[RMDB]
RNA sequence: GGGAACGACUCGAGUAGAGUCGAAAACACAACUUGCAUUUUGUAGCACAUGGAUCAAGAACUAAUUGUGACUUUCAAGUCUUAUUAAUUAUUUAAGAAACACAUUUGGUAAGACUAUAGCUGCUAUAAAUUGUGAUUCCUCUUACUGAUCUGGGAACGGUAAAAUUACCUUCGGGUAAUUUUACCGAAAAGAAACAACAACAACAAC
Reactivity to 2A3 in 0.01 (KOAc 150mM, MgCl2 10mM, bicine 150mM(pH8.5), 24C), signal-to-noise 1, nucleotides 027 to 156: c060a000c000a020a100c030u030u060g000c000a000u070u000u000u000g000u010a070g010c000a010c000a030u060g110g000a220u030c040a110a150g050a220a070c020u060a010a020u000u020g000u040g050a100c110u080u110u180c130a090a040g010u000c020u040u090a150u110u070a260a160u110u140a080u160u020u060a140a040g000a000a020a000c010a000c000a010u000u000u030g000g040u010a090a000g020a000c000u000a010u080a050g040c100u040g000c000u010a000u000a050a000a040u000u010g020u000g000a030u000u060c000c040u030c030u020u100a100c030u050g100a060u100c100u300g010g060g100a060a060
Source: RMDB library OK3TST, as collected in RNAgym.
Chemical mapping of a 207-nucleotide RNA with 2A3.